[RMDB]
RNA sequence: GGGAACGACUCGAGUAGAGUCGAAAAAGAUCUCCUUCAGCUCUACCAUCCUGGGAAACUUUGAAGAAGAGUUCCUGGUCAAUGUCAAUGGGUCACCUGAGCCUGUGAAACUGACCAUUAGAGGCUGGCAUACGAAGCGAUUCGUCGCUUCGUAUGCAAAAGAAACAACAACAACAAC
Reactivity to 2A3 in 0.01 (KOAc 150mM, MgCl2 10mM, bicine 150mM(pH8.5), 24C), signal-to-noise 1, nucleotides 027 to 126: a000g050a070u050c020u040c020c000u000u030c000a000g000c020u000c010u040a010c020c010a050u140c020c090u030g010g010g080a030a050a060c000u050u070u200g110a180a090g110a080a000g000a020g040u000u030c030c000u010g020g010u040c040a040a050u090g040u010c020a050a020u090g000g000g030u030c020a040c180c090u070g010a100g050c000c010u060g030u040g000a060a010a030c030u010g010a000c000c000a060u030u160a080g060a020g150g030c060u060g000
Reactivity to DMS in 0.01 (KOAc 150mM, MgCl2 10mM, bicine 150mM(pH8.5), 24C), signal-to-noise 1, nucleotides 027 to 126: a030g020a140u010c030u000c040c040u000u000c000a080g000c010u000c020u000a190c000c020a050u000c100c070u010g020g000g000a060a040a040c050u000u010u000g000a110a080g000a090a000g000a060g000u000u000c000c000u000g000g000u000c060a050a050u000g020u000c150a170a080u020g000g000g010u000c040a180c080c070u000g000a140g000c010c020u000g000u000g000a060a080a030c040u000g000a010c000c030a130u000u000a060g010a100g010g020c040u000g010
Chemical mapping of a 177-nucleotide RNA with 2A3 and DMS. For 2A3, 994 sequencing reads were counted. The RNA was probed in 150 mM KOAc, 10 mM MgCl2 and 150 mM bicine (pH 8.5) at 24 C. DMS adducts were read by reverse transcription with MarathonRT. Values are in units of 0.01, from 0 to 300, in steps of 10. High 2A3 reactivity points to a flexible backbone, as in loops and unpaired stretches. For 2A3 the reverse transcriptase was SuperScript II with manganese. The DMS profile rests on 981 reads.